[RMDB]
RNA sequence: GGGAACGACUCGAGUAGAGUCGAAAAGAAAAAGAGCACGAGAUAUCGAAGGCCUAAGAUAUCGAGAGACUAAUGUCUCGAGUAGUGGAUACGAAGGCCUAAGUAUCGACUACGAGUGCUCGAAAAAGGGUUAUUAUACCUUCGGGUAUAAUAACCCAAAAGAAACAACAACAACAAC
Reactivity to 2A3 in 0.01 (KOAc 150mM, MgCl2 10mM, bicine 150mM(pH8.5), 24C), signal-to-noise 4, nucleotides 027 to 126: g140a000a090a010a010a000g000a000g000c020a000c000g040a030g000a060u010a010u050c030g020a080a040g060g000c000c010u020a030a000g000a030u010a000u010c010g000a010g000a000g000a030c030u180a240a100u300g020u000c000u000c000g010a000g000u060a010g010u000g170g020a020u010a020c020g040a120a050g070g000c000c000u030a060a010g010u000a010u030c030g130a020c020u060a050c000g030a020g010u000g010c000u000c000g000a010a010a000a000a010
Reactivity to DMS in 0.01 (KOAc 150mM, MgCl2 10mM, bicine 150mM(pH8.5), 24C), signal-to-noise 3, nucleotides 027 to 126: g020a070a040a020a080a080g000a010g030c000a000c000g020a160g010a000u000a040u030c000g000a210a030g010g030c020c000u010a060a230g000a110u000a000u000c000g000a190g000a040g030a000c000u020a070a120u050g000u000c010u000c000g000a070g010u000a030g000u010g000g000a010u020a010c020g010a200a080g000g010c010c010u030a020a100g000u010a020u000c000g010a080c110u000a050c130g000a210g000u000g010c020u000c000g000a010a030a120a170a070